[RMDB]
RNA sequence: GGGAACGACUCGAGUAGAGUCGAAAACAAUCGGUGCCCCCUGAUGUGGUGCCUUCAUGCCGAAGAAUUUCACCCCAACGGGGACGUCUGUGAUAGACGGGCUAGGGAUAUCACGUAGGCCAGAUACAAUCCGCGGUUAAUUCGUUAACCGCGGAUUAAAAGAAACAACAACAACAAC
Reactivity to DMS in 0.01 (KOAc 150mM, MgCl2 10mM, bicine 150mM(pH8.5), 24C), signal-to-noise 1, nucleotides 027 to 126: c160a130a100u020c020g010g020u010g010c000c010c080c030c040u070g050a080u000g020u010g020g010u000g000c120c040u000u010c100a050u010g010c110c000g000a070a060g020a130a120u000u000u010c050a130c010c020c040c090a060a240c250g010g000g000g000a020c000g010u000c000u000g010u020g010a180u000a040g010a040c010g000g000g010c050u010a080g000g000g000a020u010a020u000c000a020c010g010u010a150g010g010c050c070a100g020a130u010a070c160